[RMDB]
RNA sequence: GGGAACGACUCGAGUAGAGUCGAAAAGCGGGUAACUUCGGUUACCCGCAAAGACGCGUCUCGUCGCGUCGCCGUCGCGUCGCGGCGCGUCGCGUCGCGAGAAAAGGACGAAGUUCGCUUCGUCCAACAGCAGUAGUGUCUUCGGACACUACUGCUGAAAAGAAACAACAACAACAAC
Reactivity to 2A3 in 0.01 (KOAc 150mM, MgCl2 10mM, bicine 150mM(pH8.5), 24C), signal-to-noise 1, nucleotides 027 to 126: g060c000g050g020g010u060a030a000c000u060u140c170g100g020u000u000a000c000c000c010g000c000a000a000a000g000a000c000g010c000g010u010c000u020c040g000u010c010g020c000g000u040c000g000c050c070g300u200c260g000c000g010u010c010g000c010g030g030c000g000c010g000u000c020g000c000g000u010c000g000c040g050a160g120a020a170a020a040g010g010a000c000g010a010a000g000u050u100c170g060c130u010u010c000g010u000c000c010a000a000
Reactivity to DMS in 0.01 (KOAc 150mM, MgCl2 10mM, bicine 150mM(pH8.5), 24C), signal-to-noise 1, nucleotides 027 to 126: g000c000g010g010g000u000a000a010c000u000u030c230g060g000u000u000a000c000c000c010g080c000a030a050a060g020a000c030g000c000g000u000c000u000c000g000u000c000g000c000g000u000c000g010c010c300g000u000c100g030c000g060u010c000g020c000g010g010c030g000c070g040u000c000g010c000g000u000c010g030c080g000a140g000a090a080a200a170g000g000a010c010g010a010a010g020u000u030c220g020c000u000u010c000g000u000c000c010a040a040